[RMDB]
Source: RMDB library RSTRND, as collected in RNAgym. An RNA of 207 nucleotides, treated with 2A3 and read out base by base. The RNA was probed in 150 mM KOAc, 10 mM MgCl2 and 150 mM bicine (pH 8.5) at 24 C.

RNA sequence: GGGAACGACUCGAGUAGAGUCGAAAAGUGUUCGCCGGUCGCGGACGGACACGGGACAGCAAACAGCGACUGGGAUCGUCAUCUCGGCUUGUUCGCGUGACCGGGAGAUCCAAGUAGAGACAUAGCGGACUGCACACGGAGAAGCCCUACUGACUCGCUUUCCACAUGUGUUCGCACAUGUGGAAAGAAAAGAAACAACAACAACAAC
Reactivity to 2A3 in 0.01 (KOAc 150mM, MgCl2 10mM, bicine 150mM(pH8.5), 24C), signal-to-noise 2, nucleotides 027 to 156: g030u030g010u020u000c000g000c000c020g020g010u020c010g000c000g030g030a040c000g000g000a010c010a030c010g020g050g050a100c090a110g070c050a090a070a090c010a040g020c010g010a020c020u020g020g000g060a050u020c010g020u030c020a030u000c000u000c010g010g000c050u070u250g010u030u010c010g010c000g020u020g010a040c020c020g010g000g000a020g010a010u020c000c010a040a030g000u160a000g090a000g020a010c040a080u160a010g000c000g000g000a000c010u020g010c070a060c040a050c060g030g010a040g010a070a030g070c030c010c010u100a120c040u070g040a070c000u010c110g040